[RMDB]
About this RNA: The record gives the reactivity of an RNA of 177 nucleotides to DMS and 2A3. Reactivities are given for positions 27 through 126. The reactions ran in a buffer of 150 mM KOAc, 10 mM MgCl2 and 150 mM bicine (pH 8.5), at 24 C. For 2A3, 31,722 sequencing reads were counted.
RNA sequence: GGGAACGACUCGAGUAGAGUCGAAAAGAUAUGGAUCCCAGUUCGCGAGGAUCUACCUUAUGUCGGAAACGACAUAGUAGGGAGCGAACCAGGAUCCUAAGUCAAAACAUGGUGUUCGCACCAUGAACAUAUUCUCUGUGUUCGCACAGAGAAUAUGAAAAGAAACAACAACAACAAC
Reactivity to DMS in 0.01 (KOAc 150mM, MgCl2 10mM, bicine 150mM(pH8.5), 24C), signal-to-noise 8, nucleotides 027 to 126: g010a030u000a220u020g010g000a010u000c000c000c050a080g010u000u000c000g030c000g020a150g040g010a050u010c060u000a020c030c190u000u000a010u000g020u000c010g010g000a050a050a120c000g010a020c000a020u000a030g010u010a020g010g000g010a020g040c010g020a010a010c000c050a080g000g000a010u000c000c000u000a010a090g000u000c020a140a090a130a240c020a010u000g010g020u000g010u000u020c280g020c010a010c000c000a000u000g010a130a260
Reactivity to 2A3 in 0.01 (KOAc 150mM, MgCl2 10mM, bicine 150mM(pH8.5), 24C), signal-to-noise 5, nucleotides 027 to 126: g010a010u040a030u080g000g010a000u000c020c010c000a000g010u010u000c010g000c020g040a290g200g100a120u030c040u050a010c010c020u150u110a030u050g010u000c010g010g010a020a030a050c000g010a000c000a000u010a010g010u020a010g000g010g000a070g000c000g000a000a000c010c000a020g000g000a000u000c000c000u000a040a010g020u030c040a020a010a130a200c010a010u010g000g010u020g060u110u120c300g060c110a010c010c010a000u020g010a040a000